Description: Source: RMDB library OK3TST, as collected in RNAgym. The record gives the reactivity of an RNA of 207 nucleotides to DMS and 2A3. The 2A3 profile rests on 1,433 reads. 2A3 is a SHAPE reagent: it acylates the 2'-hydroxyl of flexible nucleotides of all four kinds. The reactions ran in a buffer of 150 mM KOAc, 10 mM MgCl2 and 150 mM bicine (pH 8.5), at 24 C. The DMS profile rests on 3,334 reads.
[RMDB]
RNA sequence: GGGAACGACUCGAGUAGAGUCGAAAACUCCAAAUAACUGGAAAUUGUAUGAGGGAAUUGAUCAGGAAUGGCCUUCUAGGUGGUUCUACCUGGUGCUUGGCUUGGACUCCAGGAGCCUACUUGGUAGGUAAUUAGCAUUUUGGAGUGAGCCCUCCUACUAUUCCUAUACGUUCGCGUAUAGGAAUAGAAAAGAAACAACAACAACAAC
Reactivity to DMS in 0.01 (KOAc 150mM, MgCl2 10mM, bicine 150mM(pH8.5), 24C), signal-to-noise 2, nucleotides 027 to 156: c060u000c010c000a050a090a110u010a130a150c070u010g010g000a050a100a110u010u000g000u000a110u000g010a060g000g000g010a110a110u000u030g020a090u010c030a100g000g000a090a050u000g010g020c020c030u000u010c080u020a030g030g040u000g020g080u000u000c060u000a130c030c010u020g000g020u000g000c050u000u010g040g000c070u000u000g020g000a110c000u000c020c010a040g020g010a300g030c300c010u000a010c000u000u010g010g010u000a010g020g000u000a050a070u010u000a090g030c090a210u000u000u020u000g000g000a050g010u000g000a170g020c000c030c020u000c010c050u010a250
Reactivity to 2A3 in 0.01 (KOAc 150mM, MgCl2 10mM, bicine 150mM(pH8.5), 24C), signal-to-noise 3, nucleotides 027 to 156: c000u020c010c000a000a020a050u110a080a010c020u020g020g050a030a050a080u130u090g040u210a180u150g080a130g070g040g060a040a090u070u100g040a070u150c020a020g020g070a080a120u060g050g020c000c010u060u090c040u060a060g020g030u020g020g050u150u230c030u090a220c010c000u010g040g030u030g040c050u100u110g050g030c040u040u090g070g020a050c000u000c010c000a000g000g010a000g010c000c000u000a010c020u070u060g050g000u020a010g000g000u040a080a160u110u140a020g030c030a020u000u010u010u050g020g000a010g010u030g000a020g000c010c000c000u010c010c000u030a040